[RMDB]
RNA sequence: GGGAACGACUCGAGUAGAGUCGAAAAUGCUGGGAAAGAGGCGGCUGGCCCCUGCGUAAGUGUGCGGGUGCGGUGUGAGAAAGCUGGAAGCCUGUUUUCUAGGCGGGGAAGCAGCCUGCGCUGCCGGUCAUGCUAUGGAUUUCGAUCCAUAGCAUGAAAAAGAAACAACAACAACAAC
Reactivity to DMS in 0.01 (KOAc 150mM, MgCl2 10mM, bicine 150mM(pH8.5), 24C), signal-to-noise 6, nucleotides 027 to 126: u000g020c030u000g010g000g010a050a050a060g010a060g010g010c020g010g010c030u000g010g010c020c020c020c020u000g020c040g020u010a090a120g020u010g020u010g010c050g010g000g010u000g020c050g010g020u000g000u020g010a140g010a100a100a170g010c020u010g000g010a090a120g010c020c020u000g010u000u000u010u010c050u010a080g020g010c020g000g000g000g010a170a120g010c020a040g000c030c040u000g020c100g010c040u000g010c010c070g010g000
Reactivity to 2A3 in 0.01 (KOAc 150mM, MgCl2 10mM, bicine 150mM(pH8.5), 24C), signal-to-noise 4, nucleotides 027 to 126: u090g010c020u030g020g020g050a100a130a050g110a050g050g010c010g010g020c030u040g040g040c010c000c000c020u030g000c020g080u080a160a130g080u090g070u040g150c020g020g030g000u050g050c060g030g010u120g020u090g060a110g130a090a100a010g030c010u030g030g050a050a020g000c000c000u020g090u030u080u040u000c040u030a050g050g050c000g040g000g000g010a060a030g010c020a000g000c010c000u070g000c100g010c040u030g010c010c030g030g000
The record gives the reactivity of an RNA of 177 nucleotides to DMS and 2A3. For 2A3, 5,227 sequencing reads were counted. As a SHAPE reagent, 2A3 marks flexible, mostly unpaired nucleotides at the ribose 2'-OH. Values are in units of 0.01, from 0 to 300, in steps of 10. It was measured as part of the RMDB library OK2TRN.